[RMDB]
RNA sequence: GGGAACGACUCGAGUAGAGUCGAAAAUCACUGUCUGUACAUCUUUGAAGAACUUGGCAUCUAUACCACUCAUUUGGUAACCAUGUAAAUUCCAGUCACACUGUUCAACUUGCCUUAUUUUCUUCAGUUGAAUUACAAAGCCCUUGUAAAAGGCAUAUGACUGAGGCUAUUUCGAUAGCCUCAGUCAAAAAGAAACAACAACAACAAC
Reactivity to 2A3 in 0.01 (KOAc 150mM, MgCl2 10mM, bicine 150mM(pH8.5), 24C), signal-to-noise 1, nucleotides 027 to 156: u080c020a020c080u020g050u030c060u060g030u040a060c010a100u040c080u070u130u170g060a100a020g050a080a070c020u130u080g030g040c010a020u000c040u080a140u080a040c000c010a040c080u220c060a090u000u040u180g050g020u100a060a070c060c000a040u060g020u090a070a140a130u120u010c030c000a000g060u030c020a070c020a030c130u040g050u080u050c020a020a020c100u020u020g010c020c000u110u110a170u160u070u020u050c010u030u060c000a000g010u020u020g030a080a090u030u020a010c010a020a040a010g040c110c000c000u000u000g080u040a060a090a040a040g050g070c030a000u120a050

This 207-nucleotide RNA was probed chemically with 2A3. It was measured as part of the RMDB library OK3TST. For 2A3, 429 sequencing reads were counted.